[RMDB]
RNA sequence: GGGAACGACUCGAGUAGAGUCGAAAAUCUGUUAUCACCUAACGCAAGUUAUCCACCAUCCAAGCGUCGAAACUGUAUGAAAACAAGGUUUUAGUUUCACCACAUCACGUUCACCUUUUGCUUUACACAUAUGUCUCUUAUUCGUAAGAGACAUAUGAAAAGAAACAACAACAACAAC
Reactivity to 2A3 in 0.01 (KOAc 150mM, MgCl2 10mM, bicine 150mM(pH8.5), 24C), signal-to-noise 9, nucleotides 027 to 126: u030c020u040g070u100u060a090u110c040a040c060c010u040a080a020c040g020c050a050a040g010u050u040a070u070c020c020a030c010c010a040u020c020c010a050a020g020c010g060u050c040g050a040a040a040c030u040g050u120a080u180g140a040a050a030a040c060a070a090g060g030u030u030u040u100a050g020u020u040u030c030a030c020c000a020c000a030u050c020a010c050g030u040u030c040a160c020c000u020u060u070u100g040c010u060u070u110a060c110a000
Reactivity to DMS in 0.01 (KOAc 150mM, MgCl2 10mM, bicine 150mM(pH8.5), 24C), signal-to-noise 9, nucleotides 027 to 126: u010c040u010g010u010u010a080u010c070a080c060c050u010a060a070c090g010c070a070a070g010u000u010a080u000c040c030a050c030c030a060u000c040c050a070a090g010c060g020u000c070g010a050a040a050c060u000g010u010a080u010g010a070a040a060a070c100a080a100g010g010u000u000u000u000a080g010u010u000u000c030a080c050c030a060c070a050u000c040a050c050g010u000u000c030a070c030c020u000u000u010u010g010c040u000u000u000a080c240a190

The record gives the reactivity of an RNA of 177 nucleotides to 2A3 and DMS. Values cover nucleotides 27 to 126. It was measured as part of the RMDB libraries RFM100 and RFMREP. The reactions ran in a buffer of 150 mM KOAc, 10 mM MgCl2 and 150 mM bicine (pH 8.5), at 24 C. 2A3 is a SHAPE reagent: it acylates the 2'-hydroxyl of flexible nucleotides of all four kinds.